An RNA of 177 nucleotides, treated with DMS and 2A3 and read out base by base. High 2A3 reactivity points to a flexible backbone, as in loops and unpaired stretches. The 2A3 profile rests on 3,575 reads. The reactions ran in a buffer of 150 mM KOAc, 10 mM MgCl2 and 150 mM bicine (pH 8.5), at 24 C.

RNA sequence: GGGAACGACUCGAGUAGAGUCGAAAAUCGCUUUCUUCGGUGGGGUCGGUUACUUCAUCUGGAAGGAUUCCCAUAGCCGCAAAGGCUGAUCCUCCCGGAUACACAGAGCACGCAAGGCACUUAGGGCCUAUGGUCGAUGGUUCGCCAUCGACCAUAGAAAAGAAACAACAACAACAAC
Reactivity to DMS in 0.01 (KOAc 150mM, MgCl2 10mM, bicine 150mM(pH8.5), 24C), signal-to-noise 4, nucleotides 027 to 126: u030c110g020c060u000u040u010c020u010u010c160g000g010u000g010g010g000g010u010c110g020g010u020u010a060c080u000u010c070a030u000c010u020g000g020a050a020g010g000a070u010u000c060c060c050a220u030a050g000c000c010g030c230a090a140a120g010g000c000u000g000a050u000c010c010u000c060c020c030g000g000a050u010a100c120a090c090a050g020a110g030c030a060c040g000c040a090a100g000g000c010a050c070u020u030a070g000g010g000c040
Reactivity to 2A3 in 0.01 (KOAc 150mM, MgCl2 10mM, bicine 150mM(pH8.5), 24C), signal-to-noise 4, nucleotides 027 to 126: u080c020g000c040u010u070u020c010u060u060c040g050g000u030g010g040g000g000u040c060g030g070u090u090a060c010u030u030c030a040u000c020u070g000g010a020a000g020g010a010u040u040c030c020c030a070u090a010g000c000c010g030c100a270a090a020g010g000c000u000g010a040u020c000c000u030c000c000c010g020g010a060u050a040c060a000c010a040g090a030g020c050a010c040g030c020a010a060g060g000c020a040c090u080u120a090g000g030g020c000